[RMDB]
RNA sequence: GGGAACGACUCGAGUAGAGUCGAAAACUCGGCGCCGCCGAAAAGGGAAGCCGGUUAAUAUUCCGGCACCGCUGCCCGCUGCCUUUAUGGCACCCGACGCCUCGGGAUAGGCCGGGCGGGAGCUGCCCACCGGACAAAUUUUCGAAUUUGUCCGGUGAAAAGAAACAACAACAACAAC
Reactivity to DMS in 0.01 (KOAc 150mM, MgCl2 10mM, bicine 150mM(pH8.5), 24C), signal-to-noise 3, nucleotides 027 to 126: c040u010c020g010g020c060g030c050c080g030c040c040g020a030a040a090a180g010g020g010a140a140g010c010c000g030g030u030u010a160a080u040a210u020u010c000c010g000g000c000a070c060c050g010c050u020g000c010c010c040g020c180u010g000c010c000u020u030u020a070u040g000g000c020a080c040c030c000g010a090c270g000c150c110u010c050g000g020g010a190u030a010g000g000c100c110g020g000g010c000g000g050g020a060g010c040u000g000c080c050
Reactivity to 2A3 in 0.01 (KOAc 150mM, MgCl2 10mM, bicine 150mM(pH8.5), 24C), signal-to-noise 5, nucleotides 027 to 126: c010u000c010g010g010c100g030c040c090g060c020c020g080a130a110a040a020g080g010g010a190a040g010c000c000g000g000u040u030a120a070u070a060u130u080c000c000g010g000c020a020c020c030g060c050u090g120c020c010c000g000c030u050g030c020c000u130u240u150a150u210g050g010c010a020c010c000c010g040a050c070g130c040c110u060c020g020g000g020a060u120a070g060g000c020c010g020g000g000c000g000g000g000a020g000c030u050g000c000c010
Conditions: 150 mM KOAc, 10 mM MgCl2 and 150 mM bicine (pH 8.5), 24 C. This 177-nucleotide RNA was probed chemically with DMS and 2A3. DMS adducts were read by reverse transcription with MarathonRT. The data come from the RNA Mapping Database (RMDB), library RFM100. Values cover nucleotides 27 to 126.